Conditions: 150 mM KOAc, 10 mM MgCl2 and 150 mM bicine (pH 8.5), 24 C.
An RNA of 177 nucleotides, treated with 2A3 and DMS and read out base by base.
RNA sequence: GGGAACGACUCGAGUAGAGUCGAAAAGAAGACUAGUUCGCUAGUCUUCAAAAGAGCUAGCAAUGUACAGCUAGCAAAGAUCGAAAGAUCAAAUGAACAAAAAAACCAUCGACUUCGGUCGAUGGAAUACGUCGGUAUUAUUCGUAAUACCGACGUAAAAAGAAACAACAACAACAAC
Reactivity to 2A3 in 0.01 (KOAc 150mM, MgCl2 10mM, bicine 150mM(pH8.5), 24C), signal-to-noise 2, nucleotides 027 to 126: g000a000a010g000a000c010u000a010g020u010u030c060g010c090u000a010g000u000c020u000u000c000a000a010a000a020g030a010g000c010u010a010g010c000a120a090u210g060u280a200c060a100g000c000u020a000g000c000a020a060a000g000a000u030c000g060a030a020a030g020a010u040c050a000a000a080u200g040a090a040c070a070a100a020a000a000a020a070c010c000a000u000c000g000a010c010u010u100c280g070g000u010c000g020a010u000g000g050a000a000
Reactivity to DMS in 0.01 (KOAc 150mM, MgCl2 10mM, bicine 150mM(pH8.5), 24C), signal-to-noise 2, nucleotides 027 to 126: g010a040a020g000a040c000u000a010g000u010u020c200g010c000u000a010g000u000c000u000u000c010a050a100a070a140g020a190g000c010u000a000g010c000a120a060u010g030u010a080c210a120g010c000u020a010g000c020a050a060a100g010a010u000c000g000a150a140a090g000a000u000c000a100a080a040u000g000a100a020c090a000a000a080a040a050a120a150c010c010a000u000c010g000a010c000u010u000c140g030g000u000c010g000a000u000g000g000a030a030